Source information:
Conditions: 150 mM KOAc, 10 mM MgCl2 and 150 mM bicine (pH 8.5), 24 C. The record gives the reactivity of an RNA of 177 nucleotides to 2A3. Reactivities are given for positions 27 through 126. 2A3 adducts were read by reverse transcription with SuperScript II with manganese. It was measured as part of the RMDB library RFM100. The 2A3 profile rests on 435 reads.
RNA sequence: GGGAACGACUCGAGUAGAGUCGAAAAGCAAGGUUCGAAACUUAAUAAAUACCCUAGCGCUUAAAGACACUCACCACCCGCAAAAAUAUCCCCGGGCUAGUCUUUUGUGGGGUUUUGAGCGUCGGAUACGCAAAUAUAGCUUCGGCUAUAUUUGCGUAAAAGAAACAACAACAACAAC
Reactivity to 2A3 in 0.01 (KOAc 150mM, MgCl2 10mM, bicine 150mM(pH8.5), 24C), signal-to-noise 1, nucleotides 027 to 126: g070c030a110a040g080g010u130u080c070g040a180a060a030c060u060u130a140a120u090a090a230a030u080a030c020c000c010u040a000g050c040g000c020u010u010a050a050a020g040a010c010a010c180u030c000a010c010c010a030c000c010c010g020c040a030a000a040a040a100u010a080u070c040c000c000c000g020g000g000c000u030a020g080u000c080u000u200u070u030g050u030g000g000g040g030u000u060u060u000g020a010g000c000g030u010c040g020g000a040u050